[RMDB]
RNA sequence: GGGAACGACUCGAGUAGAGUCGAAAACGACAAGAUUCGUGAGCACUACCUCGACCGUCGCGACAUCCGCGCCGAAAUCAUCCGCUGCUACUGAGGUCACCAUGGCGAUCGAACUUGUGUACCGAACAGUACCAAUUCUUUUCGAAGAAUUGGUACUAAAAGAAACAACAACAACAAC
Reactivity to 2A3 in 0.01 (KOAc 150mM, MgCl2 10mM, bicine 150mM(pH8.5), 24C), signal-to-noise 8, nucleotides 027 to 126: c070g070a010c020a030a010g050a300u010u020c010g000u020g020a020g010c020a020c100u050a030c040c000u010c020g050a070c050c010g010u030c010g010c000g040a060c030a230u130c090c010g000c010g000c020c010g080a090a060a040u150c060a060u040c030c060g070c100u080g010c020u070a090c060u100g010a010g020g010u040c020a060c130c060a120u170g090g000c000g010a020u010c010g000a010a010c000u010u010g010u010g030u040a040c010c010g020a070a020c040
Reactivity to DMS in 0.01 (KOAc 150mM, MgCl2 10mM, bicine 150mM(pH8.5), 24C), signal-to-noise 6, nucleotides 027 to 126: c190g010a080c030a040a060g000a190u010u000c010g010u000g000a300g000c030a120c110u000a070c050c010u010c010g010a100c140c040g000u010c060g020c040g020a150c210a130u000c160c040g000c030g000c040c030g010a050a060a050u000c110a070u000c060c040g000c040u000g000c050u010a050c110u010g010a040g000g010u000c130a070c120c130a080u000g000g000c010g000a160u010c020g000a010a050c030u000u000g000u000g020u000a160c030c020g000a070a060c190
Background: This 177-nucleotide RNA was probed chemically with 2A3 and DMS. The DMS profile rests on 5,828 reads. The RNA was probed in 150 mM KOAc, 10 mM MgCl2 and 150 mM bicine (pH 8.5) at 24 C. Reactivities are given for positions 27 through 126. DMS adducts were read by reverse transcription with MarathonRT. For 2A3 the reverse transcriptase was SuperScript II with manganese. As a SHAPE reagent, 2A3 marks flexible, mostly unpaired nucleotides at the ribose 2'-OH.